Source information: Conditions: 150 mM KOAc, 10 mM MgCl2 and 150 mM bicine (pH 8.5), 24 C. Structure probing data (DMS) for a 177-nucleotide construct. DMS adducts were read by reverse transcription with MarathonRT.

RNA sequence: GGGAACGACUCGAGUAGAGUCGAAAAGAUAUGGACCUCCAGACUAUCCCCACUUCUUUUGACGCCUGGUAGUCGGAAACGACUAGAAGGGCGAUAAGAAGUGGGGAUAGUCUGAAGGUCCUAAGUCCAUAGCUUGUAUCUUCGGAUACAAGCUAUGAAAAGAAACAACAACAACAAC
Reactivity to DMS in 0.01 (KOAc 150mM, MgCl2 10mM, bicine 150mM(pH8.5), 24C), signal-to-noise 2, nucleotides 027 to 126: g010a150u010a300u000g020g000a020c000c000u000c000c000a000g000a030c000u000a000u000c000c000c010c000a000c000u000u000c010u000u000u010u000g050a230c080g020c000c000u000g010g020u000a010g010u000c000g000g020a130a080a160c020g010a000c010u000a020g010a300a300g000g010g010c010g020a080u000a010a010g000a010a010g030u010g020g010g010g000a000u000a010g000u000c000u010g010a000a000g000g000u000c000c010u000a000a080g010u000c040